[RMDB]
RNA sequence: GGGAACGACUCGAGUAGAGUCGAAAAGAUAUGGAGUUCGAGUCCACCUAUGAAGUCGGAAACGAUGGAGGUGGGCUCGAGACUCCUAAGUCAAACUCAAACUCAUUGUUCGCAAUGAGUUUGAGAAGUACUUACAUCUGUUCGCAGAUGUAAGUACAAAAGAAACAACAACAACAAC
Reactivity to DMS in 0.01 (KOAc 150mM, MgCl2 10mM, bicine 150mM(pH8.5), 24C), signal-to-noise 6, nucleotides 027 to 126: g010a050u000a300u000g000g010a020g010u000u000c000g010a020g010u000c000c000a010c000c000u000a260u010g010a130a170g000u010c000g010g000a140a100a170c000g000a010u000g000g000a000g010g040u000g000g010g000c000u000c000g010a010g000a010c010u000c000c000u000a020a090g010u000c030a120a100a220c000u000c000a000a000a000c000u000c000a010u000u000g010u000u010c250g020c010a000a000u000g010a010g000u000u000u000g000a000g010a040a090
Reactivity to 2A3 in 0.01 (KOAc 150mM, MgCl2 10mM, bicine 150mM(pH8.5), 24C), signal-to-noise 7, nucleotides 027 to 126: g050a020u070a040u190g000g010a010g000u000u030c000g000a000g000u000c000c000a020c000c000u300a300u300g040a030a010g020u010c010g020g040a080a070a080c010g010a010u030g020g010a010g000g010u000g000g000g000c010u000c000g000a000g000a000c000u000c000c000u000a060a020g020u000c050a050a040a100c000u000c000a000a000a000c000u000c010a000u000u010g060u130u100c300g000c140a000a000u010g000a000g000u000u000u000g000a000g000a000a000